Chemical mapping of a 177-nucleotide RNA with DMS.
The reactions ran in a buffer of 150 mM KOAc, 10 mM MgCl2 and 150 mM bicine (pH 8.5), at 24 C.

RNA sequence: GGGAACGACUCGAGUAGAGUCGAAAACCUGAUCGACGCCAAUGGCGGUAGCAGGCCCCCUUGGCCGCCCCUGGAGUACCAGCCCUACCAGAGCAUCUACGUCGGGGGCAUGAUGGAAGGGGAGGGCUGUCCCUCUCCCUUUCGAGGGAGAGGGACAAAAAGAAACAACAACAACAAC
Reactivity to DMS in 0.01 (KOAc 150mM, MgCl2 10mM, bicine 150mM(pH8.5), 24C), signal-to-noise 1, nucleotides 027 to 126: c060c050u010g000a120u000c070g000a170c050g030c010c030a070a080u000g020g000c050g020g030u020a110g030c110a050g010g000c040c020c000c030c100u000u000g000g010c030c060g010c010c000c040c020u000g010g010a080g000u010a030c190c050a130g000c000c020c020u000a110c190c120a070g000a140g000c010a090u000c150u000a070c170g020u000c070g000g000g000g000g000c040a010u010g000a030u000g020g000a010a060g000g000g000g000a020g020g000g000c090
The data come from the RNA Mapping Database (RMDB), library OK2TRN.